[RMDB]
RNA sequence: GGGAACGACUCGAGUAGAGUCGAAAAACUCCCGCGAGGGGGCGUCUGGUGGAAGUCAUAGGUGCGCAACCGUGUCGAGCGAAAGCGAAGCGCCGUAAGGCUUCGGGGACGGGUGAGCCGGCGGCCAACUACGCGCAAUAUUCGUAUUGCGCGUAGUAAAAGAAACAACAACAACAAC
Reactivity to 2A3 in 0.01 (KOAc 150mM, MgCl2 10mM, bicine 150mM(pH8.5), 24C), signal-to-noise 3, nucleotides 027 to 126: a000c020u010c000c010c020g000c040g010a090g000g040g010g000g000c010g010u040c060u080g070g000u050g080g030a070a010g030u030c040a080u100a170g030g010u050g010c020g000c040a040a030c010c020g010u030g030u120c090g030a020g030c010g020a090a060a010g060c050g030a080a020g030c010g010c070c010g030u130a100a060g030g000c000u000u020c020g000g000g000g020a050c040g040g000g000u070g020a030g040c020c000g020g000c000g010g010c000c000a010
Reactivity to DMS in 0.01 (KOAc 150mM, MgCl2 10mM, bicine 150mM(pH8.5), 24C), signal-to-noise 3, nucleotides 027 to 126: a090c100u000c000c010c000g040c200g030a080g030g010g030g000g010c020g000u010c050u010g000g010u000g010g030a070a070g000u010c040a090u000a070g010g000u000g020c040g010c070a140a080c140c040g010u020g030u040c090g010a170g000c030g000a130a090a160g000c030g010a100a100g020c050g000c050c050g000u020a070a130g010g000c030u000u010c030g010g000g020g010a060c070g010g000g020u000g000a110g010c040c000g010g010c080g010g000c010c060a110
An RNA of 177 nucleotides, treated with 2A3 and DMS and read out base by base. For DMS, 5,345 sequencing reads were counted. Conditions: 150 mM KOAc, 10 mM MgCl2 and 150 mM bicine (pH 8.5), 24 C. For 2A3, 2,511 sequencing reads were counted. Source: RMDB library RFM100, as collected in RNAgym.